[RMDB]
RNA sequence: GGGAACGACUCGAGUAGAGUCGAAAACCCUCACUCUUCGGAGUGAGGGAAAUCUGAUUCCCAAUAGCUGGCUAUCCGGGCUAAGACGGAUAGGCGUUGCCAAAAGAUCUGGCUUCGGCCAGAUCAAGUUUCUCUAGUACUUCGGUACUAGAGAAACAAAAGAAACAACAACAACAAC
Reactivity to DMS in 0.01 (KOAc 150mM, MgCl2 10mM, bicine 150mM(pH8.5), 24C), signal-to-noise 1, nucleotides 027 to 126: c000c000c000u000c000a010c000u000c000u010u000c150g040g000a030g040u010g000a000g000g000g000a000a000a030u010c130u000g000a300u000u000c000c000c000a170a090u000a030g030c010u010g000g000c010u010a000u000c000c000g030g000g000c040u000a060a100g000a070c010g010g000a010u000a020g000g000c070g000u000u000g020c010c020a120a090a140a130g000a000u000c010u010g000g000c000u010u010c190g010g010c000c000a020g000a000u000c010a050a070
Reactivity to 2A3 in 0.01 (KOAc 150mM, MgCl2 10mM, bicine 150mM(pH8.5), 24C), signal-to-noise 1, nucleotides 027 to 126: c000c010c000u000c000a000c000u000c000u030u090c290g140g000a000g000u010g000a020g000g000g000a070a050a000u110c100u130g070a190u090u050c020c000c000a010a030u140a020g020c020u010g120g000c000u010a010u010c000c000g080g000g060c090u120a130a030g180a050c030g010g000a000u000a000g010g030c020g200u300u120g060c030c000a040a070a040a120g000a000u020c000u010g020g010c000u050u060c220g070g000c000c000a000g000a000u010c000a020a010
Structure probing data (DMS and 2A3) for a 177-nucleotide construct. For DMS, 1,410 sequencing reads were counted. Source: RMDB library M2PK50, as collected in RNAgym. For 2A3 the reverse transcriptase was SuperScript II with manganese. The RNA was probed in 150 mM KOAc, 10 mM MgCl2 and 150 mM bicine (pH 8.5) at 24 C.